Description
Conditions: 150 mM KOAc, 10 mM MgCl2 and 150 mM bicine (pH 8.5), 24 C. Structure probing data (DMS and 2A3) for a 207-nucleotide construct. It was measured as part of the RMDB library OK3TST. Reactivities are given for positions 27 through 156.

RNA sequence: GGGAACGACUCGAGUAGAGUCGAAAAAGAAUCAUCUAUUUCUCUGAAAAUCCUCGUUCCAUUUAAUGCGGAAUGGUAUAUAGAAACCAAGAUCGAGGUGAUAGGUGUGCUCAUUGCUACUGGGUUAUUUUUUCUUCUAGGGCCUUUUAGAGAACAGUACAUAGUCAUCGUUCGCGAUGACUAUGUAAAAAGAAACAACAACAACAAC
Reactivity to DMS in 0.01 (KOAc 150mM, MgCl2 10mM, bicine 150mM(pH8.5), 24C), signal-to-noise 1, nucleotides 027 to 156: a110g010a160a160u000c040a100u010c010u000a050u000u000u000c010u000c030u020g000a130a070a100a070u000c010c000u000c030g020u000u000c000c000a130u000u000u000a110a110u000g040c060g010g010a100a060u000g030g040u010a060u000a180u010a110g030a160a070a120c060c010a040a060g030a020u000c060g030a090g000g050u010g000a080u000a060g000g030u000g000u000g030c040u000c060a110u000u000g000c010u010a050c020u000g000g020g000u000u000a030u010u000u000u020u000u000c040u010u000c070u010a060g000g050g020c000c060u030u000u010u040a150g000a120g010a090a080c100a130g000
Reactivity to 2A3 in 0.01 (KOAc 150mM, MgCl2 10mM, bicine 150mM(pH8.5), 24C), signal-to-noise 2, nucleotides 027 to 156: a000g080a010a010u060c000a020u000c030u100a070u010u130u010c030u000c000u010g030a020a030a030a050u100c010c010u010c010g040u010u000c020c020a100u120u120u300a230a070u260g060c050g020g000a010a000u020g060g050u000a030u010a010u000a110g090a090a080a000c010c020a000a030g020a080u040c000g010a020g040g000u010g030a030u060a080g000g000u030g000u050g020c030u030c080a060u030u080g030c030u010a050c010u030g070g000g020u160u080a200u030u120u120u040u040u020c000u050u040c020u020a020g070g060g150c020c050u200u290u180u170a080g010a030g030a020a040c010a080g090